[RMDB]
RNA sequence: GGGAACGACUCGAGUAGAGUCGAAAACUGGGUAAUGAUCUUGCCGGGAACGAUACCGAUGGCCCGUAUCUUGCCGCUGUUGGACUGCGAGCGGAAAUUGGAGGCGGUCACACGCGGAGCCUUGACAUCGAGUAAUAUCAUUCGUGAUAUUACUCGAAAAAGAAACAACAACAACAAC
Reactivity to 2A3 in 0.01 (KOAc 150mM, MgCl2 10mM, bicine 150mM(pH8.5), 24C), signal-to-noise 8, nucleotides 027 to 126: c020u050g040g010g020u070a080a070u160g060a050u030c020u020u070g010c030c000g020g010g010a090a030c050g050a060u070a110c020c020g060a080u050g060g010c020c020c000g000u040a070u040c030u010u100g040c010c010g000c030u060g060u130u120g090g050a050c030u050g020c030g070a070g020c030g030g070a100a130a080u130u110g090g010a050g080g010c030g000g010u020c020a030c000a000c100g030c010g010g020a030g020c000c020u030u090g060a020c010a090
Reactivity to DMS in 0.01 (KOAc 150mM, MgCl2 10mM, bicine 150mM(pH8.5), 24C), signal-to-noise 9, nucleotides 027 to 126: c040u000g010g010g020u000a060a050u010g010a090u010c060u000u000g010c030c020g000g010g010a080a070c130g000a100u010a080c060c050g000a100u010g010g010c060c030c040g020u000a050u000c040u000u000g020c020c020g020c020u000g030u000u010g010g010a070c060u000g010c050g020a100g020c050g000g000a030a070a150u010u010g010g010a130g010g010c040g010g010u000c040a050c070a070c090g010c040g000g000a130g000c050c030u000u010g010a100c210a150
The record gives the reactivity of an RNA of 177 nucleotides to 2A3 and DMS. The reactions ran in a buffer of 150 mM KOAc, 10 mM MgCl2 and 150 mM bicine (pH 8.5), at 24 C. It was measured as part of the RMDB library OK2TST. For DMS, 25,344 sequencing reads were counted.